[RMDB]
An RNA of 177 nucleotides, treated with 2A3 and DMS and read out base by base.
The reactions ran in a buffer of 150 mM KOAc, 10 mM MgCl2 and 150 mM bicine (pH 8.5), at 24 C.
Values cover nucleotides 27 to 126.
2A3 adducts were read by reverse transcription with SuperScript II with manganese.
RNA sequence: GGGAACGACUCGAGUAGAGUCGAAAACACAUCAACAUUGGCGGAUUUCACUGCGGUAUCGGCCAUCAGAACACCAAUGGAAGCCGGUGCACCGACAAUCACGCCGCAAGAACGGCCCAACGGUGCGCCAACCGUUCAAGUUCGCUUGAACGGUUGGAAAAGAAACAACAACAACAAC
Reactivity to 2A3 in 0.01 (KOAc 150mM, MgCl2 10mM, bicine 150mM(pH8.5), 24C), signal-to-noise 3, nucleotides 027 to 126: c050a020c020a050u130c050a020a150c020a120u050u080g030g000c040g030g030a070u000u150u150c100a090c120u070g050c070g050g030u060a090u110c030g080g020c030c000a050u120c020a010g070a060a040c040a040c120c010a020a010u010g020g020a050a020g040c060c030g030g000u020g000c000a020c030c000g060a070c070a060a030u090c030a030c200g000c010c000g040c010a100a000g060a130a030c000g010g000c000c020c020a010a020c040g020g030u020g000c020g000
Reactivity to DMS in 0.01 (KOAc 150mM, MgCl2 10mM, bicine 150mM(pH8.5), 24C), signal-to-noise 3, nucleotides 027 to 126: c080a130c170a070u010c050a070a130c110a100u010u000g000g060c010g020g040a090u010u000u000c140a130c060u000g050c200g000g010u000a050u000c090g020g010c030c040a070u000c040a040g020a100a060c110a110c140c070a050a040u000g000g020a080a060g000c120c070g000g000u000g010c020a020c020c030g010a060c160a060a070u010c140a070c160g030c010c000g010c100a100a070g000a090a110c070g000g030c030c090c050a130a110c070g000g010u000g000c060g010